Chemical mapping of a 177-nucleotide RNA with DMS and 2A3.
For 2A3, 1,916 sequencing reads were counted.
For 2A3 the reverse transcriptase was SuperScript II with manganese.
Conditions: 150 mM KOAc, 10 mM MgCl2 and 150 mM bicine (pH 8.5), 24 C.

[RMDB]
RNA sequence: GGGAACGACUCGAGUAGAGUCGAAAAAGCUUACUAAUUAGCCUUAUUAGCCUAUCAUAUCUAAAUCAACUUGCAGAUAAUAGCUUGAAUUUUUCACUAUUGUCUUUUACUGACUCCUUAUCAGCACACUUGUUGCUGUAUUCGUACAGCAACAAGUAAAAGAAACAACAACAACAAC
Reactivity to DMS in 0.01 (KOAc 150mM, MgCl2 10mM, bicine 150mM(pH8.5), 24C), signal-to-noise 2, nucleotides 027 to 126: a080g020c030u020u020a200c100u000a040a120u010u010a050g030c030c050u010u000a070u010u010a090g000c040c030u000a120u000c050a050u010a040u000c050u000a040a060a080u000c060a030a050c100u000u000g010c090a020g010a010u000a000a000u000a010g000c120u010u010g050a030a140u010u020u000u000u010c020a060c020u000a010u000u000g000u000c000u010u010u000u000a090c070u000g000a060c070u000c020c030u000u010a060u010c030a050g030c110a100c160
Reactivity to 2A3 in 0.01 (KOAc 150mM, MgCl2 10mM, bicine 150mM(pH8.5), 24C), signal-to-noise 3, nucleotides 027 to 126: a000g060c050u080u070a050c060u120a090a210u180u110a040g010c010c020u090u060a090u060u110a100g020c000c010u090a060u130c050a100u090a050u070c070u090a120a060a060u070c020a020a120c060u120u140g000c050a020g010a030u020a010a000u010a020g070c050u040u090g060a110a100u170u160u060u150u050c000a000c000u010a020u010u030g020u020c000u020u050u060u070a060c040u000g060a030c020u060c020c030u060u140a060u100c020a000g000c070a030c020